[RMDB]
RNA sequence: GGGAACGACUCGAGUAGAGUCGAAAAGAUAUGGACCAUCCGAAGCUAGCUGUUGUCGGAAACGACAAUACAGCUUGGACCUUCGAUGGUCCUAAGUCAAAGGUUAUCAUGUUCGCAUGAUAACCAAGUGUAAGAUCAACUUCGGUUGAUCUUACACAAAAGAAACAACAACAACAAC
Reactivity to DMS in 0.01 (KOAc 150mM, MgCl2 10mM, bicine 150mM(pH8.5), 24C), signal-to-noise 3, nucleotides 027 to 126: g000a020u010a250u030g000g000a020c000c000a010u000c090c060g030a010a000g020c060u010a020g020c010u000g020u000u000g020u000c010g000g000a050a060a110c010g000a020c010a030a130u010a070c040a020g010c010u010u020g040g010a150c260c010u000u000c010g010a020u010g000g000u010c010c010u010a010a040g010u010c020a130a130a140g000g000u000u000a000u000c000a000u000g000u010u020c250g010c020a000u000g010a000u000a000a000c000c000a030a030
Reactivity to 2A3 in 0.01 (KOAc 150mM, MgCl2 10mM, bicine 150mM(pH8.5), 24C), signal-to-noise 3, nucleotides 027 to 126: g020a010u030a010u080g000g010a000c000c020a040u130c280c280g020a010a010g020c090u100a000g000c000u120g020u010u010g000u000c010g000g000a050a010a020c010g010a000c000a030a070u190a130c000a000g000c000u000u060g190g110a180c000c000u010u020c010g010a000u010g000g000u000c000c000u000a010a000g000u000c040a100a080a100g030g000u000u010a010u000c000a000u010g050u060u060c180g010c190a000u010g000a010u000a010a000c000c000a010a010